Source information
An RNA of 177 nucleotides, treated with DMS and 2A3 and read out base by base. The 2A3 profile rests on 717 reads. For DMS, 970 sequencing reads were counted. The reactions ran in a buffer of 150 mM KOAc, 10 mM MgCl2 and 150 mM bicine (pH 8.5), at 24 C. Values are in units of 0.01, from 0 to 300, in steps of 10. It was measured as part of the RMDB library OK1LIB.

[RMDB]
RNA sequence: GGGAACGACUCGAGUAGAGUCGAAAAUCGAACUGGCAGUAUGCGGCGCAAAGGAAGAUUGAGCCAAAACUCCCUUUAACGACCAGACAUACGCCAUAAUCUGGGGUGAGGGUUUCCACUGGCAUGCAUGGUCCUGGUAGUUCGCUACCAGGACCAUAAAAGAAACAACAACAACAAC
Reactivity to DMS in 0.01 (KOAc 150mM, MgCl2 10mM, bicine 150mM(pH8.5), 24C), signal-to-noise 1, nucleotides 027 to 126: u020c120g020a090a160c180u010g000g050c050a140g000u000a060u000g000c010g000g090c020g000c300a020a110a000g000g000a000a090g000a180u000u010g000a060g000c000c160a190a000a140a110c000u000c140c000c000u000u000u000a220a220c000g000a050c000c000a050g050a140c150a040u070a000c020g000c140c060a090u020a090a000u000c070u080g000g020g000g050u020g020a090g010g000g000u000u000u040c000c120a110c000u050g000g000c000a120u000g060c160
Reactivity to 2A3 in 0.01 (KOAc 150mM, MgCl2 10mM, bicine 150mM(pH8.5), 24C), signal-to-noise 2, nucleotides 027 to 126: u130c020g030a020a030c110u080g030g000c010a100g020u000a010u060g060c030g000g000c020g000c100a020a040a000g050g000a020a070g030a140u000u300g060a000g020c010c030a020a050a000a050c040u070c020c000c010u020u010u000a070a000c000g280a300c040c000a030g030a050c000a060u040a000c070g060c040c040a060u110a090a120u000c080u070g000g010g050g000u060g000a150g020g020g020u000u040u030c070c030a100c110u050g020g000c070a000u020g000c010